The data come from the RNA Mapping Database (RMDB), library OK3TST.
An RNA of 207 nucleotides, treated with 2A3 and DMS and read out base by base.
DMS adducts were read by reverse transcription with MarathonRT.
The DMS profile rests on 2,188 reads.
For 2A3 the reverse transcriptase was SuperScript II with manganese.
The RNA was probed in 150 mM KOAc, 10 mM MgCl2 and 150 mM bicine (pH 8.5) at 24 C.

RNA sequence: GGGAACGACUCGAGUAGAGUCGAAAAUCAGUACUAACAGGAAUUUGGAAGAAGUUGAUUCCAACCUUUAUGGAUGACUUUGAUAGGUUAAAGACUUCAGUGGAGGAAGUUACUGCAGAUGUGGUGGAAUAGCAAGAGAACUAGAAUUAGAAGUUGACUUUUAGCCUGAUUUCGAUCAGGCUAAAAGAAAAGAAACAACAACAACAAC
Reactivity to 2A3 in 0.01 (KOAc 150mM, MgCl2 10mM, bicine 150mM(pH8.5), 24C), signal-to-noise 2, nucleotides 027 to 156: u010c000a000g080u050a080c030u120a110a070c030a060g020g070a130a150u070u090u100g000g010a030a000g000a110a030g030u080u070g040a040u050u000c030c010a040a020c050c000u030u050u160a060u080g030g000a010u040g010a000c000u020u060u060g070a100u100a040g010g030u040u140a190a080a060g070a030c000u040u020c080a060g020u120g080g080a060g020g020a040a000g000u060u060a060c030u030g020c040a010g010a190u100g040u050g060g030u030g000g000a010a010u010a030g010c010a030a080g010a000g000a020a020c010u050a060g120a060a040u160u130a020g000a050a000g020u020u010g010a020
Reactivity to DMS in 0.01 (KOAc 150mM, MgCl2 10mM, bicine 150mM(pH8.5), 24C), signal-to-noise 1, nucleotides 027 to 156: u020c080a130g000u000a210c080u030a110a130c120a070g020g000a070a060u000u010u000g010g010a060a090g000a160a170g010u010u000g000a150u000u000c040c030a020a150c040c060u000u000u000a070u040g040g060a110u010g030a040c010u000u020u010g010a110u000a050g040g020u010u000a060a090a110g000a060c040u000u010c020a100g030u010g020g020a070g000g000a040a110g000u010u000a080c060u000g010c010a090g000a090u010g060u000g020g040u000g020g020a050a040u010a030g010c040a040a070g020a090g000a030a050c020u020a030g020a040a040u010u000a060g010a020a070g000u000u000g000a140